Chemical mapping of a 177-nucleotide RNA with 2A3 and DMS. Conditions: 150 mM KOAc, 10 mM MgCl2 and 150 mM bicine (pH 8.5), 24 C. It was measured as part of the RMDB library M2PK50. For 2A3, 3,193 sequencing reads were counted.
[RMDB]
RNA sequence: GGGAACGACUCGAGUAGAGUCGAAAAGCAGUAGUGUUCGCACUACUGCAAAUAAAAAGAGGUGCUAGCUACACCCUCUAUAAGCAAAGAUGGAAAGAUCAAAAACAUGCUACUUCGGUAGCAUGAAGUAGGGUUAAGAGUUCGCUCUUAACCCUACAAAAGAAACAACAACAACAAC
Reactivity to 2A3 in 0.01 (KOAc 150mM, MgCl2 10mM, bicine 150mM(pH8.5), 24C), signal-to-noise 3, nucleotides 027 to 126: g000c000a000g000u000a000g000u000g030u050u140c220g050c060a000c000u010a000c010u000g000c000a020a010a000u000a000a040a000a010a000g050a040g000g020u030g010c040u030a040g020c030u080a040c010a020c030c130c000u000c030u030a200u050a060a040g080c100a110a060a040g070a060u120g040g200a100a110a070g080a080u080c070a010a090a000a010a040c010a010u010g010c000u010a000c000u020u050c270g080g000u010a000g000c000a000u010g010a010a010
Reactivity to DMS in 0.01 (KOAc 150mM, MgCl2 10mM, bicine 150mM(pH8.5), 24C), signal-to-noise 2, nucleotides 027 to 126: g000c000a000g000u000a000g020u000g000u010u010c200g030c010a020c000u010a010c000u000g000c000a000a050a040u000a030a070a080a120a050g000a070g020g000u000g000c020u000a160g000c110u020a120c010a040c040c050c030u010c010u000a080u000a090a080g000c160a070a030a080g000a090u000g010g000a040a100a070g010a070u020c070a040a070a050a070a200c000a010u000g000c000u000a010c000u010u010c140g010g010u000a000g000c000a000u010g000a010a050